Chemical mapping of a 177-nucleotide RNA with 2A3 and DMS. For DMS, 22,920 sequencing reads were counted. Source: RMDB library 15KREP, as collected in RNAgym. The 2A3 profile rests on 17,008 reads.
RNA sequence: GGGAACGACUCGAGUAGAGUCGAAAAAAGAGGCAUACUAUGGAGAAUUAUGAACUAGAGAAGCACUGUUACGACUUGUUACGUGACUGUGAUGCUGUAGCUCCCCAUGAUUUCUUCAUCUUUGAUGCAAGUCAUAAUACUUCGGUAUUAUGACUUGAAAAGAAACAACAACAACAAC
Reactivity to 2A3 in 0.01 (KOAc 150mM, MgCl2 10mM, bicine 150mM(pH8.5), 24C), signal-to-noise 8, nucleotides 027 to 126: a000a000g140a040g020g020c020a030u050a070c040u060a030u030g010g000a010g010a020a010u030u010a020u050g020a030a010c010u010a020g000a000g010a170a000g010c000a000c020u020g000u010u010a000c010g040a060c070u120u180g120u280u160a050c010g010u000g000a010c000u000g000u010g030a030u050g010c000u050g040u050a010g010c020u080c030c020c010c000a010u020g010a030u060u190u030c000u030u010c010a020u010c040u040u090u120g030a030u060g010
Reactivity to DMS in 0.01 (KOAc 150mM, MgCl2 10mM, bicine 150mM(pH8.5), 24C), signal-to-noise 9, nucleotides 027 to 126: a060a050g010a090g000g010c040a040u000a070c120u000a030u000g000g000a010g000a030a020u000u000a030u000g010a040a130c010u000a020g000a020g000a040a030g000c000a010c010u000g000u000u000a010c000g010a120c130u010u010g020u010u010a090c020g020u000g000a010c010u000g010u000g000a020u000g010c000u000g000u000a010g000c080u010c080c300c100c030a030u000g000a020u000u000u010c010u000u000c030a020u000c160u000u000u000g010a090u010g010